[RMDB]
RNA sequence: GGGAACGACUCGAGUAGAGUCGAAAAGCGCCUUUCGAGGCGCAGUCGACCUUUGUGGUGUCGAAGUACAGGGAGCUUUAUGUGGUCCCAUUGGGACCACUAAAGCGAAGAACUGUACCGAAGCCACCACUCUGGUACGCAAGCAGUUCGCUGCUAAUGAAAAGUAACCUUUCGAGGUUACUUUUCAAAAAGAAACAACAACAACAAC
Reactivity to 2A3 in 0.01 (KOAc 150mM, MgCl2 10mM, bicine 150mM(pH8.5), 24C), signal-to-noise 1, nucleotides 027 to 156: g020c020g030c000c010u070u110u280c300g120a020g000g020c000g040c010a000g010u090c030g000a010c010c010u010u000u000g000u000g000g030u000g000u010c010g010a070a020g000u000a000c000a000g010g040g000a020g010c000u020u050u050a120u300g000u030g040g000u000c010c000c030a100u080u180g010g000g000a020c000c000a000c000u000a000a000a010g010c000g010a000a000g010a020a010c000u010g000u000a000c010c010g030a060a000g030c050c000a000c000c000a000c000u000c010u000g010g000u040a190c020g000c030a010a040g020c000a000g010u130u130c150g050c070u010g020c030u170a220a200
Reactivity to DMS in 0.01 (KOAc 150mM, MgCl2 10mM, bicine 150mM(pH8.5), 24C), signal-to-noise 1, nucleotides 027 to 156: g000c000g010c000c000u000u000u000c180g000a040g000g040c000g040c000a000g000u000c000g000a090c000c000u000u000u010g020u020g020g040u000g010u010c030g030a280a050g000u000a020c010a030g000g000g010a300g020c000u010u000u000a000u030g070u000g010g020u010c000c000c010a170u000u000g050g050g050a040c000c010a010c000u000a000a010a010g000c060g010a050a140g020a140a170c010u000g020u000a000c020c000g020a160a290g000c220c000a030c010c000a030c000u000c010u000g030g060u000a080c070g000c040a080a160g010c020a110g000u000u010c170g020c000u010g010c000u000a080a190
This 207-nucleotide RNA was probed chemically with 2A3 and DMS. For DMS the reverse transcriptase was MarathonRT. The reactions ran in a buffer of 150 mM KOAc, 10 mM MgCl2 and 150 mM bicine (pH 8.5), at 24 C. Reactivities are given for positions 27 through 156. For 2A3 the reverse transcriptase was SuperScript II with manganese.